The record gives the reactivity of an RNA of 177 nucleotides to 2A3 and DMS. Values cover nucleotides 27 to 126. For 2A3 the reverse transcriptase was SuperScript II with manganese. For 2A3, 4,709 sequencing reads were counted.

[RMDB]
RNA sequence: GGGAACGACUCGAGUAGAGUCGAAAAGAUAUGGACCCAUGAACUACCCUAGCCGAAGAACUCUUUCGGAAACGAAAGAGGGAGGCUACGGCAUGGGUCCUAAGUCAAACGCCGCUUCGGCGGCGAAUCAUAUUUUCCUGUUCGCAGGAAAAUAUGAAAAAGAAACAACAACAACAAC
Reactivity to 2A3 in 0.01 (KOAc 150mM, MgCl2 10mM, bicine 150mM(pH8.5), 24C), signal-to-noise 2, nucleotides 027 to 126: g030a040u100a020u190g000g010a010c000c020c020a000u020g010a040a130c170u230a090c300c020c020u010a000g000c010c000g300a300a050g020a050a020c000u010c020u010u030u000c010g020g000a080a040a020c010g000a000a010a010g000a000g000g030g000a010g000g030c010u000a010c010g000g000c010a000u000g000g020g000u000c000c000u000a000a000g000u010c010a020a070a070c020g000c010c020g030c030u040u060c100g150g020c000g010g000c000g010a010a030
Reactivity to DMS in 0.01 (KOAc 150mM, MgCl2 10mM, bicine 150mM(pH8.5), 24C), signal-to-noise 2, nucleotides 027 to 126: g000a060u000a300u000g000g020a000c000c010c000a000u000g020a050a060c080u020a300c050c000c010u000a010g010c000c000g000a110a150g000a120a180c000u000c000u000u000u000c000g010g000a090a050a140c000g000a000a010a020g000a010g000g000g000a030g010g020c000u000a000c290g000g000c000a010u010g000g010g010u000c000c000u010a010a080g010u010c040a110a150a250c020g010c010c000g030c000u000u010c130g020g010c000g010g010c000g000a030a050
The DMS profile rests on 3,424 reads.
It was measured as part of the RMDB library TTRDEL.